[RMDB]
RNA sequence: GGGAACGACUCGAGUAGAGUCGAAAAGAUAUGGAUCGUCCAUACCAGCGAAGAACUGGGAUCGGAAACGAUCCCAGGGAGCUGAUGGCGAUCCUAAGUCAAAGCACGUGGACUUCGGUCCACGUGCCAAAACGUGUAAGUUCGCUUACACGUUUUGAAAAGAAACAACAACAACAAC
Reactivity to 2A3 in 0.01 (KOAc 150mM, MgCl2 10mM, bicine 150mM(pH8.5), 24C), signal-to-noise 6, nucleotides 027 to 126: g010a000u010a000u050g000g000a000u010c010g140u070c050c010a060u160a300c210c060a020g050c010g300a300a020g000a020a000c000u000g000g000g010a000u000c000g010g000a000a000a000c000g000a010u000c030c000c000a000g000g000g000a010g000c020u070g050a110u200g020g000c000g000a000u010c000c000u000a000a000g000u000c020a150a100a020g000c000a000c010g000u000g000g010a010c000u120u130c300g040g000u010c000c000a000c000g000u000g000c010
Reactivity to DMS in 0.01 (KOAc 150mM, MgCl2 10mM, bicine 150mM(pH8.5), 24C), signal-to-noise 9, nucleotides 027 to 126: g010a020u000a040u010g000g000a010u000c000g020u010c010c290a150u010a290c300c080a020g010c010g010a110a180g000a150a230c000u000g000g000g010a010u000c000g010g000a010a010a030c000g010a010u000c000c000c010a000g000g000g010a020g020c000u000g010a090u010g010g010c010g010a010u000c000c000u000a010a060g000u000c010a120a110a170g000c000a010c000g030u000g000g000a020c000u000u010c250g030g000u000c000c000a000c000g000u000g010c000
Structure probing data (2A3 and DMS) for a 177-nucleotide construct. For 2A3, 34,216 sequencing reads were counted. The DMS profile rests on 26,625 reads.